Chemical mapping of a 207-nucleotide RNA with DMS and 2A3. For DMS the reverse transcriptase was MarathonRT. Source: RMDB library OK3TST, as collected in RNAgym.
[RMDB]
RNA sequence: GGGAACGACUCGAGUAGAGUCGAAAAGUCGUUACGUUUCUCUUGUUCCAACUUCUGCACAGAGCGGUGAGGGUGUUCCUGAUUUAGUUGCUCUUUUAAUUUCGUUAACGCAGACUCGUAUGUCAGACCGUAUCAAAUACAUUACUACUCUCGAAUAUAGCCGCAUUAUAUUCGUAUAAUGCGGCUAAAAAGAAACAACAACAACAAC
Reactivity to DMS in 0.01 (KOAc 150mM, MgCl2 10mM, bicine 150mM(pH8.5), 24C), signal-to-noise 1, nucleotides 027 to 156: g030u000c040g020u000u000a120c160g000u000u000u010c000u010c030u000u010g000u000u000c030c020a070a120c050u000u000c010u040g010c080a100c090a110g020a110g000c030g000g030u000g000a100g040g010g040u000g020u000u000c000c030u030g040a240u000u000u000a100g010u000u000g020c030u000c050u040u000u000u000a060a120u010u000u000c080g010u010u000a040a140c070g000c050a110g000a110c030u020c060g000u030a110u000g010u020c000a160g000a100c020c030g000u030a210u000c050a040a020a220u000a110c130a070u000u000a030c000u000a030c050u010c020u000c010g000a050a070u020a140
Reactivity to 2A3 in 0.01 (KOAc 150mM, MgCl2 10mM, bicine 150mM(pH8.5), 24C), signal-to-noise 2, nucleotides 027 to 156: g060u050c020g040u080u070a050c060g000u010u070u000c040u000c010u030u060g070u100u040c040c020a090a100c090u050u020c060u090g030c070a080c030a210g080a020g060c010g010g010u050g020a040g000g060g000u030g040u030u020c000c000u070g060a130u040u040u110a010g000u030u070g020c010u010c000u050u060u020u050a080a120u040u040u060c040g080u040u050a040a030c050g000c010a010g000a060c010u020c030g080u100a040u100g060u010c000a000g010a040c030c030g030u040a040u110c080a020a100a000u090a050c020a020u140u020a030c050u060a000c010u020c020u040c040g260a090a070u300a010
Conditions: 150 mM KOAc, 10 mM MgCl2 and 150 mM bicine (pH 8.5), 24 C. Reactivities are rounded to 0.1 and cut off at 0 and 3.